The record gives the reactivity of an RNA of 207 nucleotides to DMS and 2A3.
For DMS, 5,639 sequencing reads were counted.
The 2A3 profile rests on 2,894 reads.

[RMDB]
RNA sequence: GGGAACGACUCGAGUAGAGUCGAAAAGCAUCCGACAUGGUGCUGGGAUGCGAAUAUCAGCACAAGGCUUUUGCCGAAUUACACCAGAAGAACGCAUGGCUGGUGUAUCAUCCAUGCAUCGUCUCCUAGAGUCGACGAGACGUAAGAUGUCGACAGAAUGCUAGCAUAAUUUCGAUUAUGCUAGCAUAAAAGAAACAACAACAACAAC
Reactivity to DMS in 0.01 (KOAc 150mM, MgCl2 10mM, bicine 150mM(pH8.5), 24C), signal-to-noise 3, nucleotides 027 to 156: g010c030a050u000c020c020g030a070c050a100u000g050g050u000g030c040u000g000g030g010a110u000g000c140g000a150a070u000a060u000c050a030g020c010a030c040a140a130g010g020c040u000u010u010u000g030c000c020g000a110a100u000u010a090c060a070c080c000a020g000a050a090g000a110a110c090g050c040a080u030g010g020c070u010g000g000u010g030u000a030u000c040a080u000c010c000a040u020g020c070a110u000c050g000u000c010u030c000c040u000a100g010a130g040u000c050g010a060c050g000a070g010a050c030g010u010a050a100g010a170u000g010u000c010g010a070c050a100g000a080
Reactivity to 2A3 in 0.01 (KOAc 150mM, MgCl2 10mM, bicine 150mM(pH8.5), 24C), signal-to-noise 4, nucleotides 027 to 156: g040c020a020u050c040c050g050a080c100a100u080g020g000u040g000c010u010g040g000g000a030u040g030c030g050a050a020u090a040u110c040a010g030c030a030c030a120a080g040g000c050u100u120u270u300g030c030c010g020a010a020u130u050a020c020a010c030c030a020g010a070a030g080a210a040c080g020c140a080u100g100g000c010u000g030g000u010g020u010a030u030c030a010u000c030c000a020u060g000c020a040u030c020g020u030c000u030c030c020u090a070g010a010g130u000c000g010a010c020g010a010g020a050c040g010u010a040a040g030a090u130g010u010c010g020a000c010a000g110a070
The RNA was probed in 150 mM KOAc, 10 mM MgCl2 and 150 mM bicine (pH 8.5) at 24 C.
Values cover nucleotides 27 to 156.